RNA sequence: GGGAACGACUCGAGUAGAGUCGAAAAAUUGAAGGAGUACCUGGUUGCGGCAAGUCGACGUACAUAUUGAAUGAGCAUAAGUUUUCUGAUGUUGAUUGCGAACAUGUGGUUCUCACCGCCACUAAGAGAGUAUCCAUACGUUCGCGUAUGGAUACUCAAAAGAAACAACAACAACAAC
Reactivity to 2A3 in 0.01 (KOAc 150mM, MgCl2 10mM, bicine 150mM(pH8.5), 24C), signal-to-noise 1, nucleotides 027 to 126: a000u040u030g090a020a020g050g070a040g000u040a000c010c030u060g060g090u100u150g300c010g000g000c030a070a000g060u080c010g010a010c010g070u100a020c060a040u100a120u100u110g090a110a060u060g010a040g040c010a050u070a100a100g020u090u010u000u130c080u060g040a040u050g030u000u080g070a140u040u070g020c020g020a000a040c030a020u120g040u050g090g000u000u000c080u040c070a070c070c010g000c020c000a010c030u050a110a040g070a000
Reactivity to DMS in 0.01 (KOAc 150mM, MgCl2 10mM, bicine 150mM(pH8.5), 24C), signal-to-noise 2, nucleotides 027 to 126: a060u010u000g000a100a130g020g010a060g010u000a080c030c030u000g020g000u000u000g000c080g000g000c040a060a090g020u010c060g010a070c050g050u000a040c100a030u000a140u000u000g020a080a060u000g010a080g040c070a060u000a060a090g010u000u010u010u000c090u000g010a080u010g030u010u000g000a120u010u000g010c050g020a010a040c120a050u000g010u000g000g000u000u000c070u010c050a080c060c060g010c020c040a030c070u000a040a110g000a130